[RMDB]
RNA sequence: GGGAACGACUCGAGUAGAGUCGAAAAGAAUGCGUCUGUGGGAUAACGCGAAGUUAAUAAGCGGAAUUAACUAGUCACAGACGUAUGAAAUCUAAAAAUCUGUGAUGGUUAUCCUAAAAACAGAGUAGGGUAUACUAAACUUCGGUUUAGUAUACCCAAAAGAAACAACAACAACAAC
Reactivity to DMS in 0.01 (KOAc 150mM, MgCl2 10mM, bicine 150mM(pH8.5), 24C), signal-to-noise 2, nucleotides 027 to 126: g010a130a040u000g000c000g020u000c000u000g000u010g000g000g010a120u000a010a030c080g000c060g000a200a050g000u010u020a010a010u000a070a200g000c080g000g010a140a060u000u020a000a020c020u040a200g000u030c000a000c000a000g000a020c020g000u000a000u020g000a070a040a040u010c030u040a090a090a120a080a040u000c000u000g010u000g000a300u010g010g020u000u000a010u000c000c000u000a010a070a030a160a070c010a010g000a060g000u030a100
Reactivity to 2A3 in 0.01 (KOAc 150mM, MgCl2 10mM, bicine 150mM(pH8.5), 24C), signal-to-noise 3, nucleotides 027 to 126: g100a020a010u010g000c010g000u010c000u010g000u000g000g000g100a120u030a100a050c010g010c010g110a070a000g040u040u160a110a040u130a240a020g070c120g020g040a030a000u050u050a040a030c080u070a050g120u040c000a000c000a020g000a000c010g010u000a000u000g020a010a010a010u020c030u040a030a000a020a130a100u000c000u010g030u000g000a040u080g010g000u050u040a070u070c000c000u060a090a050a000a000a010c000a000g000a010g020u060a110
Structure probing data (DMS and 2A3) for a 177-nucleotide construct.
Values are in units of 0.01, from 0 to 300, in steps of 10.